[RMDB]
RNA sequence: GGGAACGACUCGAGUAGAGUCGAAAAGUCGACAAGGUCAUCAGCCUAGGGGACAAAAUCCUUGCAUUAGGAGGCAAUGAUGCUUAUGAGGUGAUUGCGAUGUUUGAACCUCUGGUAACAUCUGUCAACUUCCUGAGGACUUCGGUCCUCAGGAAGUAAAAGAAACAACAACAACAAC
Reactivity to 2A3 in 0.01 (KOAc 150mM, MgCl2 10mM, bicine 150mM(pH8.5), 24C), signal-to-noise 1, nucleotides 027 to 126: g060u030c010g050a060c020a030a040g040g040u110c010a170u050c070a150g030c000c000u050a050g000g000g000g030a010c000a000a070a070a040u000c010c000u080u060g050c020a120u140u110a170g000g150a060g060g070c060a020a050u090g030a030u070g010c000u160u110a050u290g030a040g000g000u060g000a090u010u080g000c060g210a170u190g110u090u090u000g010a030a050c000c000u160c030u030g030g030u020a030a010c050a010u030c060u150g140u090c060a040
Reactivity to DMS in 0.01 (KOAc 150mM, MgCl2 10mM, bicine 150mM(pH8.5), 24C), signal-to-noise 1, nucleotides 027 to 126: g020u000c030g000a090c080a120a100g020g000u030c050a100u010c210a060g000c060c030u010a180g020g000g000g000a060c060a070a060a080a180u000c040c010u000u000g010c130a050u000u000a030g000g000a110g000g010c100a060a040u000g000a010u000g010c020u030u010a050u030g020a060g020g030u010g010a150u010u000g020c100g020a050u000g020u000u000u020g000a300a090c000c010u000c010u000g010g000u010a020a100c020a020u010c020u000g000u000c090a100
Chemical mapping of a 177-nucleotide RNA with 2A3 and DMS. For DMS, 823 sequencing reads were counted. The reactions ran in a buffer of 150 mM KOAc, 10 mM MgCl2 and 150 mM bicine (pH 8.5), at 24 C.